[RMDB]
RNA sequence: GGGAACGACUCGAGUAGAGUCGAAAAUUGAACCUCCAACUGUAGAUGUGGUAGCACUUCAACAGGAAAUGACAAUUGUCAAAUGUAAGGGUUUAAAUAAACCUUUCGUGAAGGACAAUGUCAGUUUACAGUCCGUGCUUCGGCACGGACAAAAGAAACAACAACAACAAC
Reactivity to DMS in 0.01 (KOAc 150mM, MgCl2 10mM, bicine 150mM(pH8.5), 24C), signal-to-noise 1, nucleotides 027 to 129: u040u030g030a060a080c070c040u040c060c050a150a220c010u010g020u040a030g030a060u050g030u000g020g060u020a130g030c000a050c000u000u050c050a080a020c040a020g020g000a010a070a070u000g000a000c010a070a060u000u010g000u030c000a050a180a040u050g030u000a000a000g000g010g000u070u020u120a120a170a100u090a000a000a000c000c040u000u010u010c000g020u000g040a120a160g010g030a030c020a060a000u030g040u030c000a000g040u020u000u030a000c270a080
Reactivity to 2A3 in 0.01 (KOAc 150mM, MgCl2 10mM, bicine 150mM(pH8.5), 24C), signal-to-noise 3, nucleotides 027 to 129: u090u110g030a040a020c030c000u030c010c010a030a020c010u000g040u050a040g030a020u000g020u010g010g080u090a010g250c010a000c000u040u030c000a060a020c010a060g030g020a000a070a090u010g000a030c050a060a200u000u000g010u020c010a100a030a020u080g060u220a000a040g000g040g000u000u000u060a170a160a090u300a050a060a000c030c000u000u010u000c000g010u010g100a230a070g160g000a000c000a010a010u000g000u000c000a010g020u030u060u110a110c090a020

This 170-nucleotide RNA was probed chemically with DMS and 2A3. The DMS profile rests on 6,654 reads. DMS adducts were read by reverse transcription with MarathonRT. The data come from the RNA Mapping Database (RMDB), library 15KLIB. 2A3 adducts were read by reverse transcription with SuperScript II with manganese. The 2A3 profile rests on 5,102 reads.